[RMDB]
RNA sequence: GGGAACGACUCGAGUAGAGUCGAAAACAGGAGUAAUUCCCGCCGAAACAGGGUUUUCACCCUUCCUUUCUUCGGGUGUCCUUCCUCGCGCCCGCAGGACCACCCCUCGCCCCCUUUGCGCUGUCGCUUCGGCUACUACCCGGUGGAAACAACUGAACAAUCCUUAUAUCUUCGGAUAUAAGGAUUGAAAAGAAACAACAACAACAAC
Reactivity to DMS in 0.01 (KOAc 150mM, MgCl2 10mM, bicine 150mM(pH8.5), 24C), signal-to-noise 1, nucleotides 027 to 156: c080a040g030g000a050g020u000a080a120u000u000c010c010c000g060c050c090g020a030a040a060c090a050g050g040g030u000u000u000u000c130a140c010c010c000u000u000c040c030u000u010u010c000u000u010c050g010g030g050u000g000u000c010c020u000u010c020c030u000c050g000c060g020c030c000c010g030c100a030g010g000a100c070c020a100c010c000c000c000u000c070g050c030c010c000c030c020u000u000u000g010c000g050c020u010g030u010c050g010c070u010u010c020g040g000c020u000a100c050u000a100c000c000c000g010g030u000g020g000a130a080a030c040a080a290c070u000g010a120a300
Reactivity to 2A3 in 0.01 (KOAc 150mM, MgCl2 10mM, bicine 150mM(pH8.5), 24C), signal-to-noise 1, nucleotides 027 to 156: c060a000g000g010a000g050u140a090a030u080u060c010c000c000g030c000c010g070a060a050a010c300a120g030g060g000u140u140u280u290c150a070c010c000c000u050u040c010c000u000u020u060c010u010u020c000g000g030g010u000g020u020c030c030u040u000c010c000u000c010g080c010g050c000c020c010g030c090a070g040g030a040c030c000a000c000c040c010c000u060c080g030c000c000c050c000c030u040u060u040g000c050g000c020u050g030u110c050g010c000u040u020c050g000g020c000u020a110c000u010a010c060c060c010g040g000u020g070g020a130a010a060c060a060a050c030u020g020a030a000